Source information: Structure probing data (2A3) for a 207-nucleotide construct. The reactions ran in a buffer of 150 mM KOAc, 10 mM MgCl2 and 150 mM bicine (pH 8.5), at 24 C. The data come from the RNA Mapping Database (RMDB), library PDB130. Reactivities are given for positions 27 through 156. Reactivities are rounded to 0.1 and cut off at 0 and 3. For 2A3 the reverse transcriptase was SuperScript II with manganese.
RNA sequence: GGGAACGACUCGAGUAGAGUCGAAAACUUGCCACUGCAUUCAUCAAUCCGCAUGAAGUUGCUUGGGAGUUAACUCCCUACAGCUUCGUUGUUGAUUGGUUCUUGAAUGUUGGUGACAUACUUGCUCAACAAGGUCAGCUAUAUCAUAAUAUCGAUAUCAGGUCUAGGUGUUCGCACCUAGACCUGAAAAAGAAACAACAACAACAAC
Reactivity to 2A3 in 0.01 (KOAc 150mM, MgCl2 10mM, bicine 150mM(pH8.5), 24C), signal-to-noise 1, nucleotides 027 to 156: c040u050u020g000c010c010a000c000u000g000c000a000u000u000c000a040u020c000a000a000u000c020c000g000c000a000u040g010a020a000g010u030u010g090c170u110u090g040g060g000a030g000u120u260a220a170c020u000c000c000c000u000a000c000a000g000c000u040u000c000g080u010u060g010u000u000g000a010u000u020g000g040u120u110c080u090u160g000a000a000u010g010u020u300g020g000u000g010a000c000a000u140a080c000u080u070g040c020u020c100a030a200c010a080a100g000g040u080c030a030g000c090u110a080u000a050u150c090a130u130a160a040u090a130u260c040g030a020u010a030